Chemical mapping of a 207-nucleotide RNA with DMS and 2A3. For DMS, 3,763 sequencing reads were counted. Conditions: 150 mM KOAc, 10 mM MgCl2 and 150 mM bicine (pH 8.5), 24 C.

[RMDB]
RNA sequence: GGGAACGACUCGAGUAGAGUCGAAAAGCCACAUAUCCCGUGACAUUGCGAAAGCAAGGCUGGCGGUAGGUAGUCCUGGGCGGCGACAGCCUAGGACUGCGGCGUAAAGGUGUACCUGGGGCCGUUAUAACGCGGUAACAGUUCGCUGUUACCGCAAGAGAGAGAACAAGUUCGCUUGUUCUCUCUCAAAAGAAACAACAACAACAAC
Reactivity to DMS in 0.01 (KOAc 150mM, MgCl2 10mM, bicine 150mM(pH8.5), 24C), signal-to-noise 2, nucleotides 027 to 156: g000c030c020a080c070a090u000a110u000c060c020c010g000u010g000a070c040a200u000u000g010c000g000a210a130a230g000c020a040a030g000g020c000u020g010g050c020g010g030u010a100g040g020u010a010g000u000c010c000u000g020g020g000c000g010g000c080g030a130c110a200g000c000c010u000a050g010g010a020c010u000g020c020g020g030c050g010u000a040a080a040g000g010u000g000u000a060c020c020u010g010g010g000g030c040c020g020u000u000a070u000a130a130c090g020c010g000g020u010a010a010c000a000g010u000u000c250g030c000u020g000u000u000a030c000c000g000c010a010a040
Reactivity to 2A3 in 0.01 (KOAc 150mM, MgCl2 10mM, bicine 150mM(pH8.5), 24C), signal-to-noise 2, nucleotides 027 to 156: g040c020c000a060c010a020u150a050u060c030c010c040g000u080g020a030c040a130u060u100g000c010g070a160a050a000g040c010a030a000g070g040c040u040g060g020c040g020g030u010a020g040g050u000a000g010u000c000c000u000g000g000g000c010g030g090c120g040a030c090a030g010c000c000u000a000g000g000a000c000u010g000c010g010g000c010g010u070a090a090a040g040g010u060g060u100a080c010c000u020g000g000g030g040c000c000g010u000u070a090u010a100a070c090g010c020g000g000u000a000a000c000a010g010u060u100c120g080c050u000g000u000u000a000c000c000g000c000a000a000